[RMDB]
RNA sequence: GGGAACGACUCGAGUAGAGUCGAAAACGUCGAUCAGGACGACAGCUUCGCCGUCGAUCACCAUCGCGUCGUCGCUCUCGUUGCGGAUGACCGUCUCGAGGCGGAACUGUCCGUUACCGAGGUCCUCCGCCCAUGGGUAGUUCGCUACCCAUGGGCGAAAAGAAACAACAACAACAAC
Reactivity to 2A3 in 0.01 (KOAc 150mM, MgCl2 10mM, bicine 150mM(pH8.5), 24C), signal-to-noise 2, nucleotides 027 to 126: c030g100u050c040g030a080u030c020a040g030g080a000c010g000a000c010a000g000c010u020u050c020g020c040c000g280u100c030g030a060u100c100a040c110c050a070u140c010g000c070g030u000c010g000u000c000g010c010u030c010u060c070g250u140u050g010c040g140g010a020u030g040a030c010c010g020u010c040u010c080g030a090g010g000c000g010g000a010a040c040u040g030u000c010c070g020u030u060a130c020c000g020a070g000g050u020c000c040u030c010
Reactivity to DMS in 0.01 (KOAc 150mM, MgCl2 10mM, bicine 150mM(pH8.5), 24C), signal-to-noise 2, nucleotides 027 to 126: c100g000u020c060g000a060u010c130a270g000g020a050c030g010a010c030a040g030c020u020u000c070g020c010c010g030u010c000g010a030u040c130a070c250c090a120u000c070g020c150g000u000c050g010u000c020g000c050u000c080u000c200g000u020u000g000c060g030g010a020u000g010a010c000c000g010u020c110u000c080g000a170g040g000c000g000g000a020a020c030u000g000u000c010c080g020u020u000a110c060c010g000a080g000g000u000c010c060u010c080

Structure probing data (2A3 and DMS) for a 177-nucleotide construct. DMS adducts were read by reverse transcription with MarathonRT. Source: RMDB library OK2TST, as collected in RNAgym. The reactions ran in a buffer of 150 mM KOAc, 10 mM MgCl2 and 150 mM bicine (pH 8.5), at 24 C. For 2A3, 2,513 sequencing reads were counted.